Structure probing data (DMS and 2A3) for a 177-nucleotide construct. Values are in units of 0.01, from 0 to 300, in steps of 10. DMS adducts were read by reverse transcription with MarathonRT. Values cover nucleotides 27 to 126. Conditions: 150 mM KOAc, 10 mM MgCl2 and 150 mM bicine (pH 8.5), 24 C.

RNA sequence: GGGAACGACUCGAGUAGAGUCGAAAAGAUAUGGACGUUAUGGAGUCCGCACAACUAUUCGGAAACGAACGAAUUGUGCCAGGACGUUGAAAUAACGUCCUAAGUCAAAGCCGGGUUCGCCCGGCAAGCAAUAAUAUCCCUUCGGGGAUAUUAUUGCAAAAGAAACAACAACAACAAC
Reactivity to DMS in 0.01 (KOAc 150mM, MgCl2 10mM, bicine 150mM(pH8.5), 24C), signal-to-noise 3, nucleotides 027 to 126: g010a050u000a300u000g000g000a000c000g010u000u000a010u000g000g000a090g000u000c000c010g010c000a000c000a010a000c060u000a300u020u000c010g000g010a120a090a140c020g010a000a030c090g020a070a110u000u000g000u000g020c020c110a130g020g000a010c010g010u000u040g030a130a090a020u000a000a000c000g020u000c000c000u000a010a070g020u000c040a120a120a170g020c010c000g000g020g020u000u010c240g010c000c010c020g000g010c010a010a020
Reactivity to 2A3 in 0.01 (KOAc 150mM, MgCl2 10mM, bicine 150mM(pH8.5), 24C), signal-to-noise 2, nucleotides 027 to 126: g020a030u060a070u150g000g010a020c000g000u020u030a010u040g000g010a010g000u000c020c000g040c000a010c000a000a030c060u120a040u040u040c020g060g010a140a080a100c030g010a040a010c030g030a270a300u010u010g000u010g010c130c090a050g000g010a020c050g080u180u050g000a040a020a000u000a000a010c000g000u000c000c000u000a030a020g010u000c020a110a070a010g010c000c010g050g020g000u030u090c220g100c080c000c000g000g030c000a000a010
2A3 adducts were read by reverse transcription with SuperScript II with manganese.